The record gives the reactivity of an RNA of 177 nucleotides to DMS and 2A3. 2A3 adducts were read by reverse transcription with SuperScript II with manganese. The 2A3 profile rests on 9,348 reads. The reactions ran in a buffer of 150 mM KOAc, 10 mM MgCl2 and 150 mM bicine (pH 8.5), at 24 C.
[RMDB]
RNA sequence: GGGAACGACUCGAGUAGAGUCGAAAAGAUAUGGAAUGUUGAGUCGCAACAGCUCGGAAACGAGACAUGCGGACUCACUGCAUUCCUAAGUCAAAGAUCAUCAAUUAGUUCGCUAAUUGAUGAUCAAUCCAUAAUUACGCUUCGGCGUAAUUAUGGAAAAAGAAACAACAACAACAAC
Reactivity to DMS in 0.01 (KOAc 150mM, MgCl2 10mM, bicine 150mM(pH8.5), 24C), signal-to-noise 5, nucleotides 027 to 126: g000a020u020a300u000g000g000a000a000u000g000u000u000g010a030g000u000c000g010c010a040a060c290a130g000c000u010c000g000g000a090a080a210c010g000a000g000a030c090a200u000g000c010g020g000a030c000u010c000a050c300u010g010c010a000u000u010c000c000u010a050a120g020u010c060a110a060a150g010a010u000c000a020u000c000a010a000u000u000a000g010u000u010c220g020c010u000a000a010u010u000g010a010u000g000a000u000c010a040a060
Reactivity to 2A3 in 0.01 (KOAc 150mM, MgCl2 10mM, bicine 150mM(pH8.5), 24C), signal-to-noise 4, nucleotides 027 to 126: g020a010u070a050u190g010g020a020a000u010g020u070u080g040a010g000u000c010g000c030a020a100c040a210g030c010u010c010g000g040a070a050a040c020g000a000g070a070c050a060u080g030c030g160g100a110c010u000c000a010c030u050g010c000a000u000u000c000c000u010a090a020g050u040c040a030a040a180g010a000u000c000a000u000c000a000a010u000u010a010g040u030u030c220g010c250u010a000a000u010u010g010a000u020g000a000u000c000a000a000